[RMDB]
RNA sequence: GGGAACGACUCGAGUAGAGUCGAAAAGACGCCUGUGUGGCGAAGCGAGUAUGAGAAAGGGCCGCACAUUAAACAGUCCAUCUAGCGGCAAGAUGGAUUGCUCGCAAAAAGAUCCAUAUCACGGAGAGCGGGUAUACUGGUUCGCCAGUAUACCCGCAAAAGAAACAACAACAACAAC
Reactivity to 2A3 in 0.01 (KOAc 150mM, MgCl2 10mM, bicine 150mM(pH8.5), 24C), signal-to-noise 1, nucleotides 027 to 126: g060a000c050g090c000c080u080g010u020g010u110g040g000c060g110a200a000g000c050g040a000g080u090a060u180g110a110g080a050a210a010g060g000g000c000c000g070c000a000c000a020u070u100a030a040a000c000a010g150u040c010c000a000u000c060u050a060g090c000g000g020c010a090a000g000a000u000g000g000a000u000u020g000c050u040c000g000c000a040a040a040a040a040g050a020u000c070c000a050u100a130u160c120a040c100g000g000a120g000a000